An RNA of 207 nucleotides, treated with 2A3 and read out base by base. The reactions ran in a buffer of 150 mM KOAc, 10 mM MgCl2 and 150 mM bicine (pH 8.5), at 24 C. Values cover nucleotides 27 to 156. For 2A3, 840 sequencing reads were counted. It was measured as part of the RMDB library OK3TST. 2A3 adducts were read by reverse transcription with SuperScript II with manganese.
RNA sequence: GGGAACGACUCGAGUAGAGUCGAAAAGGGAUAAAAUGUUUUAAUCCUGUAUGGGAAAGGGAUAAAAUGUUUUAAUCCUGUAUGGGAAAGGGAUAAAAAUGUUUACUCCUUUUACUCCUUUAUAAAGGUAUGGGAAAGGGAUAAAAUGUUUUAAUCCGUCACAGGGUAAGUUCGCUUACCCUGUGACAAAAGAAACAACAACAACAAC
Reactivity to 2A3 in 0.01 (KOAc 150mM, MgCl2 10mM, bicine 150mM(pH8.5), 24C), signal-to-noise 1, nucleotides 027 to 156: g000g000g000a030u050a020a070a030a010u100g030u020u020u030u010a110a110u030c000c000u020g040u060a180u250g070g000g040a080a040a020g010g030g010a010u070a050a050a000a000u010g010u000u150u000u020a080a050u020c000c020u030g060u050a140u070g010g000g070a000a080a080g030g000g000a000u070a040a040a030a000a000u060g040u040u020u020a050c030u010c010c000u030u050u020u020a090c010u070c000c010u090u100u020a220u110a070a050a020g020g000u050a050u110g000g000g050a070a000a000g010g000g000a030u080a030a050a000a000u010g020u000u020u030u000a050a110u070c050c100